[RMDB]
RNA sequence: GGGAACGACUCGAGUAGAGUCGAAAAUAUGUCAUUUGGUGUGCGUACAUCAGGUGGCACAACAUUCUCUAUGUCGCCACAUAGUGGAUGUGAACUCAGUGCUGUACGCACAGUUCUGAGUGACCUUUGCUACUGUAGCGACAGUGGUAAAGAAGUACUUUUAGGAUCAUUUCGAUGAUCCUAAAAGAAAAGAAACAACAACAACAAC
Reactivity to DMS in 0.01 (KOAc 150mM, MgCl2 10mM, bicine 150mM(pH8.5), 24C), signal-to-noise 4, nucleotides 027 to 156: u010a050u000g010u000c010a020u000u010u000g030g030u010g000u000g010c190g010u010a050c010a030u000c010a060g000g010u010g010g000c000a030c040a120a070c040a070u010u010c020u000c010u000a040u000g020u000c130g040c200c150a220c000a020u000a030g000u000g010g020a030u000g010u000g020a100a060c020u010c040a110g010u000g020c050u000g020u000a080c240g000c090a070c010a020g020u010u010c020u000g020a020g020u000g000a090c150c020u000u000u000g010c000u000a010c030u000g020u000a170g030c150g000a200c000a020g000u000g010g020u000a010a030a030g020a130a080g020u010a080
Reactivity to 2A3 in 0.01 (KOAc 150mM, MgCl2 10mM, bicine 150mM(pH8.5), 24C), signal-to-noise 6, nucleotides 027 to 156: u300a090u070g010u000c010a010u000u010u010g030g000u010g010u020g070c080g060u110a010c010a010u030c020a040g070g060u030g020g020c060a000c010a030a000c000a030u040u020c020u000c010u020a030u030g080u070c120g060c190c020a020c010a020u020a020g030u030g030g020a030u020g040u040g080a030a020c010u000c050a050g050u000g020c000u000g010u040a020c050g010c060a000c000a000g000u020u080c000u010g010a000g000u030g050a060c000c000u000u030u020g000c000u000a020c030u010g020u050a070g120c070g160a020c000a000g000u010g010g000u060a020a020a020g040a040a010g030u090a090